Chemical mapping of a 177-nucleotide RNA with 2A3 and DMS.
The data come from the RNA Mapping Database (RMDB), library TTRDES.
Conditions: 150 mM KOAc, 10 mM MgCl2 and 150 mM bicine (pH 8.5), 24 C.
RNA sequence: GGGAACGACUCGAGUAGAGUCGAAAAGAUAUGGAUCACAAGCAAGGCCGUGGUCGGAAACGACCACCAGGCUGAUGACCUUGUUGAUCCUAAGUCAAAACAGCCGUACUGUUCGCAGUACGGCUGAGACAUUCAAAAGGUUCGCCUUUUGAAUGUCAAAAGAAACAACAACAACAAC
Reactivity to 2A3 in 0.01 (KOAc 150mM, MgCl2 10mM, bicine 150mM(pH8.5), 24C), signal-to-noise 2, nucleotides 027 to 126: g010a000u010a000u040g000g010a000u010c000a000c010a010a000g020c020a040a040g010g000c010c010g010u000g010g020u000c010g000g000a010a000a000c000g000a000c010c000a010c010c020a020g010g010c000u010g020a050u000g010a000c000c000u010u030g030u080u220g000a000u000c000c000u000a000a000g000u000c010a020a000a030a200c010a010g040c020c000g020u010a000c000u010g080u120u160c300g000c190a000g000u000a000c000g010g000c000u000g000a000
Reactivity to DMS in 0.01 (KOAc 150mM, MgCl2 10mM, bicine 150mM(pH8.5), 24C), signal-to-noise 5, nucleotides 027 to 126: g020a010u000a010u000g000g000a010u000c010a030c010a010a010g000c010a050a010g020g040c000c020g010u010g000g010u000c000g010g000a000a010a010c010g030a010c000c010a010c300c300a060g020g010c000u000g010a030u010g000a010c300c000u000u000g010u000u010g000a010u000c000c010u010a000a050g000u000c000a100a070a180a300c000a010g020c000c000g030u000a000c000u000g000u000u020c250g040c010a000g000u000a000c000g000g000c010u000g000a010
For DMS the reverse transcriptase was MarathonRT.